Notes
Source: RMDB library OK3TST, as collected in RNAgym. The record gives the reactivity of an RNA of 207 nucleotides to 2A3 and DMS. Reactivities are rounded to 0.1 and cut off at 0 and 3. Reactivities are given for positions 27 through 156. For DMS the reverse transcriptase was MarathonRT. For DMS, 1,841 sequencing reads were counted. 2A3 adducts were read by reverse transcription with SuperScript II with manganese. The RNA was probed in 150 mM KOAc, 10 mM MgCl2 and 150 mM bicine (pH 8.5) at 24 C.
RNA sequence: GGGAACGACUCGAGUAGAGUCGAAAAACUGGAACAAGAGUCCUGAAUAUGGAAAGAAUGACCGAGGGACACUGUCUUGGUGGGACUCCACAGAAAACGUAAGAUAGUAUUCGGCAUGAAUGCUUCAGGAUCAUGCUUGCUGCCAAGAGUGAUUGGAACGAGUGAUUUAGUUCGCUAAAUCACUCGUAAAAGAAACAACAACAACAAC
Reactivity to 2A3 in 0.01 (KOAc 150mM, MgCl2 10mM, bicine 150mM(pH8.5), 24C), signal-to-noise 2, nucleotides 027 to 156: a000c060u060g010g010a040a050c020a040a010g010a000g040u000c010c000u000g000a020a030u170a100u100g060g090a170a100a070g090a050a060u050g040a170c010c010g000a020g000g030g020a040c030a000c060u040g000u030c000u050u030g050g000u000g000g000g110a190c090u070c030c000a010c020a010g230a050a110a010a000c080g050u120a040a000g010a000u000a030g020u040a090u040u030c010g020g000c010a010u040g050a040a010u120g030c010u040u000c010a010g000g010a020u060c010a020u120g090c010u030u050g000c050u070g040c030c000a090a020g060a060g060u090g040a130u030u090g020g010a060
Reactivity to DMS in 0.01 (KOAc 150mM, MgCl2 10mM, bicine 150mM(pH8.5), 24C), signal-to-noise 1, nucleotides 027 to 156: a140c030u010g010g030a050a090c040a050a080g040a300g010u010c020c010u000g040a060a060u000a160u000g000g020a210a130a110g000a190a110u000g000a150c010c010g020a180g020g000g030a070c030a050c010u010g020u010c030u040u010g030g000u020g030g010g000a140c070u000c020c070a090c110a090g010a130a080a090a130c040g030u010a060a040g010a060u010a080g020u000a110u000u030c010g000g040c030a120u020g010a080a140u000g060c090u000u000c010a080g020g000a020u010c040a130u000g020c020u000u000g000c000u000g000c010c010a040a070g000a060g080u010g030a130u000u000g030g050a120